[RMDB]
RNA sequence: GGGAACGACUCGAGUAGAGUCGAAAAAUACUUCUCAGGAUGGCGCGUUGCAGUCCAACAAGAUACAGGGACUGUACAGAAUUUUCCUAUACCUCGAGUCGGGUUUGGAAUCUAAGGUUGACUCGCUAAAACUUUACGUGGUUCGCCACGUAAAGAACUCCCUUAGUAGCUUCGGCUACUAAGGGAGAAAAGAAACAACAACAACAAC
Reactivity to 2A3 in 0.01 (KOAc 150mM, MgCl2 10mM, bicine 150mM(pH8.5), 24C), signal-to-noise 1, nucleotides 027 to 156: a020u120a110c000u070u000c020u000c040a020g040g000a040u060g040g090c030g000c060g100u060u080g000c000a000g000u000c010c000a090a060c070a000a190g140a110u170a100c040a010g000g030g040a000c000u020g020u030a060c000a000g000a170a050u000u130u000u000c000c000u030a050u040a110c000c000u000c040g020a000g030u040c050g000g000g000u060u060u030g000g000a080a040u060c100u110a060a160g040g030u110u200g100a050c010u010c000g010c030u070a060a060a000a000c030u010u000u000a000c000g000u000g000g000u090u010c090g000c030c000a000c000g010u000a000a000a000g000a000a000
This 207-nucleotide RNA was probed chemically with 2A3. As a SHAPE reagent, 2A3 marks flexible, mostly unpaired nucleotides at the ribose 2'-OH. Source: RMDB library M2RFPK, as collected in RNAgym. The reactions ran in a buffer of 150 mM KOAc, 10 mM MgCl2 and 150 mM bicine (pH 8.5), at 24 C. Reactivities are rounded to 0.1 and cut off at 0 and 3. For 2A3 the reverse transcriptase was SuperScript II with manganese. For 2A3, 567 sequencing reads were counted.